[RMDB]
This 177-nucleotide RNA was probed chemically with DMS and 2A3.
For 2A3 the reverse transcriptase was SuperScript II with manganese.
For 2A3, 1,982 sequencing reads were counted.
The reactions ran in a buffer of 150 mM KOAc, 10 mM MgCl2 and 150 mM bicine (pH 8.5), at 24 C.
The data come from the RNA Mapping Database (RMDB), library OK2TST.
RNA sequence: GGGAACGACUCGAGUAGAGUCGAAAAUCUUAACCUUGAAAUCACAGUGGUGUCAUCUGUCAUUAUACCAUCAGUCCAACAGGAGUACAUUACGUGUAAGUACACCACUGUGGUUCCGUCGCCGCAGCGUUAUACGCGGGUUCGCCCGCGUAUAACGAAAAGAAACAACAACAACAAC
Reactivity to DMS in 0.01 (KOAc 150mM, MgCl2 10mM, bicine 150mM(pH8.5), 24C), signal-to-noise 2, nucleotides 027 to 126: u020c050u000u020a100a110c100c070u020u000g020a030a010a020u000c020a000c010a020g020u000g020g020u000g020u000c040a200u000c010u020g010u000c120a070u010u000a070u000a080c020c060a140u030c140a080g010u010c110c140a100a060c160a120g010g020a130g000u020a040c100a030u000u010a030c110g010u000g000u000a000a060g030u020a010c010a020c020c010a010c000u010g000u000g000g000u000u000c020c040g000u000c030g010c030c040g000c130a050g020
Reactivity to 2A3 in 0.01 (KOAc 150mM, MgCl2 10mM, bicine 150mM(pH8.5), 24C), signal-to-noise 2, nucleotides 027 to 126: u060c020u080u110a130a150c010c040u030u170g070a050a010a020u020c000a000c000a010g010u000g010g010u000g000u000c000a030u000c040u080g030u030c020a050u030u100a090u050a120c040c020a040u180c080a040g160u120c070c020a100a060c030a190g060g040a040g020u020a010c000a080u060u120a020c060g010u000g000u030a010a020g060u020a000c000a000c000c000a040c000u000g000u000g010g000u020u000c000c010g080u060c030g060c080c040g070c080a060g110